[RMDB]
RNA sequence: GGGAACGACUCGAGUAGAGUCGAAAAAGUGCAUUGAGCCACAGAACUCUCGGUUUGGAAUCAGGAAGCUGGGAUCUGCUGUGUGGGACUGUGGGCAGGUUGUUUCGCCUCUGUUGGGCUCAGUUUUACAUUUGCAGAAACGUGAAUCAUUUAUAAAGAUUACUACCUGGUUCGCCAGGUAGUAAUCAAAAGAAACAACAACAACAAC
Reactivity to 2A3 in 0.01 (KOAc 150mM, MgCl2 10mM, bicine 150mM(pH8.5), 24C), signal-to-noise 2, nucleotides 027 to 156: a000g020u000g030c020a020u090u130g020a010g030c020c010a000c000a030g070a110a030c030u010c030u050c100g050g040u030u160u090g060g040a080a060u060c120a100g090g090a070a040g070c060u100g060g000g000a080u070c040u090g010c000u000g000u030g010u010g100g000g000a010c020u020g000u100g040g020g020c000a020g130g000u020u020g010u000u110u010c000g000c010c020u020c070u040g060u030u040g020g010g000c020u000c030a030g000u000u110u000u000a030c060a070u080u080u080g010c050a060g060a090a100a040c030g010u010g090a080a050u040c040a040u280u300u300a170u300a070a080a300